[RMDB]
An RNA of 207 nucleotides, treated with 2A3 and DMS and read out base by base. For DMS, 2,014 sequencing reads were counted. For DMS the reverse transcriptase was MarathonRT. It was measured as part of the RMDB library M2RFOK.
RNA sequence: GGGAACGACUCGAGUAGAGUCGAAAAAUCCUCAGGUUCAUAAGCGUGAUGAUUGGGUGUUCAUGCUCCAUGCAUGACAUGUGCCUCCUUUGAACCUUGUUACGACCUUUGCACAUUACCCAUCUGAAAAAGACGUUCGCGUUCGCGCGAACGUCAACAUGCCUUUAGACUUCGGUCUAAAGGCAUGAAAAGAAACAACAACAACAAC
Reactivity to 2A3 in 0.01 (KOAc 150mM, MgCl2 10mM, bicine 150mM(pH8.5), 24C), signal-to-noise 3, nucleotides 027 to 156: a010u020c010c000u000c010a010g000g010u010u020c010a040u040a300a050g030c100g140u040g070a080u030g010a020u100u190g030g000g000u050g030u090u050c010a000u010g000c000u060c230c160a130u300g000c000a000u000g000a020c030a020u040g010u010g020c000c010u040c010c020u020u000u010g020a010a000c000c000u030u100g050u040u110a100c120g030a090c030c030u120u180u150g020c010a010c000a010u110u180a050c000c020c030a020u000c040u110g090a100a100a030a030a030g020a000c010g000u000u010c000g000c000g050u020u040c250g000c000g000c010g090a010a000c000g000u000c000a000a000
Reactivity to DMS in 0.01 (KOAc 150mM, MgCl2 10mM, bicine 150mM(pH8.5), 24C), signal-to-noise 1, nucleotides 027 to 156: a140u000c010c000u000c090a110g030g020u020u000c020a070u010a070a080g030c100g160u010g020a090u000g000a060u010u010g000g020g000u000g000u010u000c020a000u000g010c020u010c200c170a130u000g030c000a000u000g020a060c130a060u000g010u020g000c010c040u000c030c040u000u000u020g000a050a020c060c040u030u010g010u000u000a080c140g010a190c090c100u020u000u020g020c010a020c020a120u000u020a100c050c010c010a050u020c020u000g030a080a080a100a140a080g000a040c000g120u000u000c010g160c010g000u000u000c210g040c090g030c010g000a020a020c010g040u000c000a000a060